[RMDB]
RNA sequence: GGGAACGACUCGAGUAGAGUCGAAAAACUAGUGUUGUUUCUUUUAAUGAAUGGGCUCUUGCCAACCAAUUCACUGAAUUUGUUGGCACUCAAUCCGUUGACAUGUUAGCUGUCAAAACAGGCGUUGUAAUGUAUAUGUUCGCAUAUACAAAAAGAAACAACAACAACAAC
Reactivity to DMS in 0.01 (KOAc 150mM, MgCl2 10mM, bicine 150mM(pH8.5), 24C), signal-to-noise 3, nucleotides 027 to 129: a000c100u080a140g020u020g030u000u000g060u100u020u020c000u010u010u010u000a040a040u040g010a110a020u040g080g010g090c000u010c000u010u030g000c030c020a000a000c020c030a070a040u010u000c040a060c210u000g090a050a010u040u000u020g010u020u020g050g000c040a060c170u040c070a060a070u010c010c060g000u000u060g020a100c070a050u060g020u000u000a100g000c110u020g030u000c100a040a080a030a000c110a150g000g000c080g010u000u050g030u050a080a130
Reactivity to 2A3 in 0.01 (KOAc 150mM, MgCl2 10mM, bicine 150mM(pH8.5), 24C), signal-to-noise 5, nucleotides 027 to 129: a000c090u110a080g060u030g000u030u010g000u000u000u000c000u020u010u040u140a090a070u140g110a080a070u010g030g010g010c010u010c040u080u050g010c000c010a000a000c000c060a000a010u030u030c180a260c300u270g010a030a020u000u000u000g020u000u000g010g000c000a010c010u020c010a030a060u020c000c000g000u040u040g010a020c000a010u050g080u110u090a080g030c050u020g010u060c000a030a030a030a030c040a040g040g010c030g050u040u040g070u100a130a100